[RMDB]
This 177-nucleotide RNA was probed chemically with 2A3.
The reactions ran in a buffer of 150 mM KOAc, 10 mM MgCl2 and 150 mM bicine (pH 8.5), at 24 C.

RNA sequence: GGGAACGACUCGAGUAGAGUCGAAAAGUGGCUGCUUGUAGCCAUGGGAUCUCCAACUGCAUGCCAGAGUAAUGGGGAGGCUUUGACAGCCCAGGUCAUCACAGUGCCUGCAGCUGCCACUCAGCUUGCUGGCCAAGACCUUCGGGUCUUGGCCAGCAAAAGAAACAACAACAACAAC
Reactivity to 2A3 in 0.01 (KOAc 150mM, MgCl2 10mM, bicine 150mM(pH8.5), 24C), signal-to-noise 1, nucleotides 027 to 126: g030u030g000g000c000u040g000c040u080u200g080u120a000g000c010c010a010u050g000g000g000a000u000c020u000c000c000a050a050c030u060g090c000a110u200g030c130c000a080g050a100g140u050a170a170u060g040g000g050g000a000g040g010c000u220u070u120g190a130c110a090g110c000c010c000a010g030g030u000c010a040u210c000a040c040a300g020u080g070c000c000u040g000c000a000g000c000u000g060c000c000a000c010u000c000a020g040c170u040u040